[RMDB]
This 177-nucleotide RNA was probed chemically with 2A3 and DMS. The reactions ran in a buffer of 150 mM KOAc, 10 mM MgCl2 and 150 mM bicine (pH 8.5), at 24 C. Reactivities are given for positions 27 through 126. For 2A3, 1,447 sequencing reads were counted. For DMS, 2,132 sequencing reads were counted.
RNA sequence: GGGAACGACUCGAGUAGAGUCGAAAAUGGUUGUAUACCUCUUAGUGUCAUCCCACUGUGUGCUUCAAAUAAACUUCGCGUUGUAAUUCCUGACUUCACCGUCUGGAAUCAGGUAGUCACAUAUCCCCGGUACUACGAAGUUCGCUUCGUAGUACCGAAAAGAAACAACAACAACAAC
Reactivity to 2A3 in 0.01 (KOAc 150mM, MgCl2 10mM, bicine 150mM(pH8.5), 24C), signal-to-noise 2, nucleotides 027 to 126: u070g000g020u070u060g100u100a040u060a110c020c030u060c050u040u140a050g010u000g010u080c000a050u010c040c010c010a030c040u030g010u000g010u030g050c020u030u060c030a000a110a300u170a040a110a070c020u070u050c060g000c070g150u030u030g070u050a060a000u020u000c000c000u010g010a030c000u030u030c050a020c030c000g020u050c010u030g020g000a010a000u020c000a020g050g030u010a030g040u040c000a010c000a010u110a090u040c000c000c000
Reactivity to DMS in 0.01 (KOAc 150mM, MgCl2 10mM, bicine 150mM(pH8.5), 24C), signal-to-noise 3, nucleotides 027 to 126: u010g000g010u000u010g020u020a080u000a040c060c030u000c090u000u000a080g030u000g040u010c060a090u000c020c010c030a140c090u000g010u000g020u010g000c020u020u000c070a080a080a120u000a080a060a040c050u000u010c100g000c140g000u000u000g000u020a090a080u000u000c000c000u000g030a030c030u000u010c300a090c300c200g000u010c060u010g000g000a020a020u000c130a030g000g000u000a040g020u000c060a070c070a030u000a140u010c000c010c010